An RNA of 207 nucleotides, treated with DMS and 2A3 and read out base by base. The DMS profile rests on 3,106 reads. Reactivities are given for positions 27 through 156. The data come from the RNA Mapping Database (RMDB), library OK3TST. Conditions: 150 mM KOAc, 10 mM MgCl2 and 150 mM bicine (pH 8.5), 24 C. For 2A3, 3,338 sequencing reads were counted.

[RMDB]
RNA sequence: GGGAACGACUCGAGUAGAGUCGAAAAAGAGUUUGUCUUCCAAGGCAAAACGCAAUUGGCUUGGCCCAGAUCAUUGUAUACCAUGUAAAACAGUGACACUAGGGCUUAGGUAUCUAAAAUAAGUGAAGUCACAGAGAGCCCAAUAUGCACAUUGGAAGAGGACGAAAAUAUUCGUAUUUUCGUCCUCAAAAGAAACAACAACAACAAC
Reactivity to DMS in 0.01 (KOAc 150mM, MgCl2 10mM, bicine 150mM(pH8.5), 24C), signal-to-noise 2, nucleotides 027 to 156: a100g020a130g020u000u000u000g010u000c020u020u030c180c090a130a130g010g010c010a040a030a060a070c060g030c040a100a220u010u000g020g010c000u000u000g040g000c020c020c010a040g000a080u000c020a040u000u000g030u000a130u000a090c110c210a100u000g010u000a070a180a160a060c020a040g000u000g010a010c030a080c020u010a180g100g020g000c000u000u000a010g000g020u000a040u010c100u010a060a070a110a110u000a060a120g000u010g010a030a080g000u000c040a070c090a190g010a050g000a070g000c060c020c020a030a040u000a070u000g000c000a060c030a160u000u000g040g010a070a180
Reactivity to 2A3 in 0.01 (KOAc 150mM, MgCl2 10mM, bicine 150mM(pH8.5), 24C), signal-to-noise 5, nucleotides 027 to 156: a000g130a020g030u040u020u040g030u000c010u130u020c050c010a040a040g030g000c020a020a030a030a040c040g010c040a030a050u080u050g030g010c010u020u020g030g000c000c000c000a000g020a040u000c010a010u010u040g030u010a090u040a150c120c090a110u230g060u190a030a030a050a050c020a010g000u010g030a010c010a050c270u090a160g000g010g000c000u010u030a030g000g030u070a060u060c070u130a080a070a160a170u160a110a000g010u010g160a060a020g030u080c030a020c020a080g100a020g010a010g050c050c030c040a010a010u100a070u100g000c030a020c030a130u030u120g030g000a090a030